[RMDB]
RNA sequence: GGGAACGACUCGAGUAGAGUCGAAAAGAUAUGGAACGAAGCGAGCUUGGAUUUAUGGGUGUAGACAUACAUGUCGGAAACGACAUGUAUGUUGAGGCCCAUUGUCAGCUCCCUUCGUUCCUAAGUCGUUAGUGAAAAACUUCGGUUUUUCACUAACAAAAGAAACAACAACAACAAC
Reactivity to DMS in 0.01 (KOAc 150mM, MgCl2 10mM, bicine 150mM(pH8.5), 24C), signal-to-noise 3, nucleotides 027 to 126: g000a130u000a300u020g000g010a020a000c000g020a000a020g040c300g000a010g000c010u010u040g010g010a040u000u010u010a000u000g010g010g020u000g000u010a300g010a010c000a000u000a000c010a000u000g020u000c000g030g010a130a080a250c010g000a000c000a010u000g000u000a000u000g010u000u000g010a150g000g010c000c000c010a010u020u000g010u000c000a030g000c000u000c020c150c010u010u000c000g000u000u000c000c000u000a020a070g010u010c100
Reactivity to 2A3 in 0.01 (KOAc 150mM, MgCl2 10mM, bicine 150mM(pH8.5), 24C), signal-to-noise 3, nucleotides 027 to 126: g050a070u180a100u230g000g000a000a010c010g010a010a010g000c020g010a000g020c060u260u300g300g030a130u300u300u210a000u090g000g000g010u300g030u140a000g010a000c000a020u000a010c000a000u010g000u010c010g030g040a070a050a040c010g030a000c000a000u000g000u000a000u000g020u000u000g000a000g010g000c000c000c000a000u010u000g000u000c010a000g000c000u000c010c010c000u020u000c000g000u000u020c000c000u000a010a000g050u010c060
Chemical mapping of a 177-nucleotide RNA with DMS and 2A3.
For 2A3, 6,027 sequencing reads were counted.
The RNA was probed in 150 mM KOAc, 10 mM MgCl2 and 150 mM bicine (pH 8.5) at 24 C.
For 2A3 the reverse transcriptase was SuperScript II with manganese.